[RMDB]
RNA sequence: GGGAACGACUCGAGUAGAGUCGAAAAAAAAAAAGAUAUGGACGGUCGUGACAUAGUGAACUACCACAACUGUCGGAAACGACAGUUUGUGGCACUAUGGUUGACCGACCGUCCUAAGUCAAAAAAACAUUAUCUAAAGCUUCGGCUUUAGAUAAUGAAAAGAAACAACAACAACAAC
Reactivity to 2A3 in 0.01 (KOAc 150mM, MgCl2 10mM, bicine 150mM(pH8.5), 24C), signal-to-noise 1, nucleotides 027 to 126: a040a030a000a000a060a000a160g060a040u140a040u080g000g000a000c000g010g010u020c010g010u020g010a010c010a000u020a000g010u010g010a090a090c130u210a090c300c010a010c010a010a000c000u000g000u010c000g000g000a070a100a020c000g000a000c000a000g010u010u090u130g000u000g060g000c000a000c010u010a000u020g030g070u120u050g010a010c000c000g010a000c000c010g000u030c010c000u000a030a010g020u010c020a040a040a030a000a070a000a130
Reactivity to DMS in 0.01 (KOAc 150mM, MgCl2 10mM, bicine 150mM(pH8.5), 24C), signal-to-noise 3, nucleotides 027 to 126: a000a000a020a050a040a100a060g000a000u010a300u000g010g020a020c000g000g000u000c010g040u000g010a050c000a000u010a010g000u000g020a070a030c120u020a300c040c020a000c000a000a010c000u010g000u000c000g000g010a080a100a160c000g000a010c010a010g000u000u020u010g040u000g000g000c040a000c010u000a000u020g000g000u010u010g010a170c300c020g000a000c000c000g010u000c000c000u000a000a070g000u000c040a020a000a040a110a110a100a140